Chemical mapping of a 207-nucleotide RNA with 2A3.
RNA sequence: GGGAACGACUCGAGUAGAGUCGAAAACUCAUCUGUGUUAUUAAACAUCUCUGUUGCUGUGUCUACAGGAGUUUCAACCUGUUUAGGUACAUAGAAGAUAUCCUCACCAAUCGUCUUAGUUAGGACAGCUUUUUGUUCACUGUUCAGACUCAGGUUAUAAGUACUGAUGCUUCGGCAUCAGUACUUAAAAAGAAACAACAACAACAAC
Reactivity to 2A3 in 0.01 (KOAc 150mM, MgCl2 10mM, bicine 150mM(pH8.5), 24C), signal-to-noise 1, nucleotides 027 to 156: c000u000c020a110u080c010u010g030u020g060u100u060a130u020u180a100a000a000c010a090u070c060u000c010u110g010u140u060g020c060u130g000u040g010u160c000u020a000c010a030g080g020a100g170u030u210u210c050a080a080c000c000u020g070u060u060u120a020g020g000u000a000c000a000u090a050g050a040a000g030a030u040a030u030c010c010u090c060a070c000c070a080a090u120c180g090u000c030u050u070a040g000u000u000a040g000g000a000c000a000g040c060u120u120u000u130u300g130u140u250c000a010c160u090g010u030u030c060a070g010a010c000u000c000a000g000g070u050u220a160
2A3 adducts were read by reverse transcription with SuperScript II with manganese. The 2A3 profile rests on 330 reads.